[RMDB]
RNA sequence: GGGAACGACUCGAGUAGAGUCGAAAAGACCAGUCAAAACCGGUCACCGUUGUCGUGCGUGUGGAAGACGGCACCGGCGAAGACGAAGAAACGAAGCUCGCGCAGACCGUUUCCAAUAUCAUCGGCACCACCGACGAAAACGGUCAGUACACCGGACCUCUAGGCAUCUAUUCGUAGAUGCCUAGAGAAAAGAAACAACAACAACAAC
Reactivity to 2A3 in 0.01 (KOAc 150mM, MgCl2 10mM, bicine 150mM(pH8.5), 24C), signal-to-noise 2, nucleotides 027 to 156: g060a030c030c020a000g130u120c050a010a000a040a110c000c000g000g060u020c040a000c020c000g010u010u040g060u030c030g000u050g190c110g020u190g040u010g060g030a010a070g070a120c040g010g000c010a020c000c000g000g000c000g000a050a010g000a010c040g030a170a100g080a070a130a000c090g060a060a000g010c020u010c000g000c030g020c020a020g020a030c000c000g000u060u040u040c060c080a060a050u120a080u190c200a040u100c050g040g050c030a020c020c000a000c020c010g010a000c010g060a030a060a000a000c000g000g020u000c070a000g030u060a000c040a020c110c000g000g030a040c000
Source: RMDB library OK3TST, as collected in RNAgym. This 207-nucleotide RNA was probed chemically with 2A3. 2A3 adducts were read by reverse transcription with SuperScript II with manganese.